[RMDB]
RNA sequence: GGGAACGACUCGAGUAGAGUCGAAAAGAUAUGGAUUUCGUCCGAUAAGCUAGUGUCGGAAACGACACCUAGCUUUUGACGGACGGUCCUAAGUCAAAAGUAUAAAUCGGUUCGCCGAUUUAUACAACCUUAGUUACAUGUUCGCAUGUAACUAAGGAAAAGAAACAACAACAACAAC
Reactivity to 2A3 in 0.01 (KOAc 150mM, MgCl2 10mM, bicine 150mM(pH8.5), 24C), signal-to-noise 6, nucleotides 027 to 126: g020a010u050a030u110g020g000a020u120u250u300c010g000u000c010c010g030a120u080a230a020g000c000u000a010g010u000g000u010c010g040g000a060a030a020c010g000a000c010a010c020c030u000a000g000c000u000u020u030u040g030a010c000g000g000a000c000g000g000u000c000c010u010a110a000g030u010c020a040a040a060a110g000u000a010u000a000a000a000u000c000g000g050u050u090c220g070c100c000g000a000u000u000u010a000u000a000c000a000a000
Reactivity to DMS in 0.01 (KOAc 150mM, MgCl2 10mM, bicine 150mM(pH8.5), 24C), signal-to-noise 9, nucleotides 027 to 126: g010a030u010a300u010g000g000a010u000u000u020c010g020u000c000c000g010a140u000a030a020g020c000u000a020g010u000g010u000c000g010g000a060a050a120c000g010a010c010a010c300c270u000a000g000c000u000u000u000u000g010a250c060g000g000a010c010g010g000u000c000c000u000a020a070g010u000c030a050a060a080a130g000u000a000u000a000a000a000u000c000g010g010u000u010c260g030c000c000g000a010u000u000u000a000u000a000c010a060a100